[RMDB]
RNA sequence: GGGAACGACUCGAGUAGAGUCGAAAAGAGCGAUUAGACAAAGGGGUAGAGCUACAUAUUAGAUAGCUGUAUAAUCGUUCAAGUUACAUCAAAACAUCUUCAAUAUUUACUACUUACUUUCCUUUCUGCCAGAGUACGGUAUUCGUACCGUACUCAAUGAAGUCAUCAUGUUCGCAUGAUGACUUCAAAAAGAAACAACAACAACAAC
Reactivity to 2A3 in 0.01 (KOAc 150mM, MgCl2 10mM, bicine 150mM(pH8.5), 24C), signal-to-noise 4, nucleotides 027 to 156: g010a000g000c000g010a010u000u040a020g020a030c040a030a110a050g040g000g030g030u080a030g030a000g040c010u040a020c030a060u230a160u120u200a090g190a300u010a010g010c000u020g020u010a010u000a020a010u000c010g000u010u020c000a020a030g020u030u130a080c050a090u160c070a090a070a090a050c030a130u090c040u200u060c070a140a140u120a190u110u230u140a130c050u040a040c000u090u050a070c000u020u100u080c000c020u050u090u040c020u040g070c010c020a020g000a000g000u000a000c000g010g010u020a030u000u070c140g000u000a010c010c000g000u000a000c000u000c010a000a000
Reactivity to DMS in 0.01 (KOAc 150mM, MgCl2 10mM, bicine 150mM(pH8.5), 24C), signal-to-noise 1, nucleotides 027 to 156: g010a050g040c040g020a080u000u000a070g000a050c020a040a090a030g000g020g010g030u000a050g020a050g000c000u000a080c030a120u000a150u040u020a120g040a250u000a030g030c000u010g020u000a080u010a010a040u000c020g010u000u010c050a120a090g010u000u000a020c080a080u010c040a090a090a120a110c090a060u010c050u010u010c050a080a090u000a130u000u010u000a120c050u010a040c050u020u010a050c040u000u000u000c020c020u000u000u000c070u010g060c110c140a120g000a020g020u000a010c000g000g040u000a040u010u000c300g030u000a020c000c020g000u000a020c000u000c010a030a070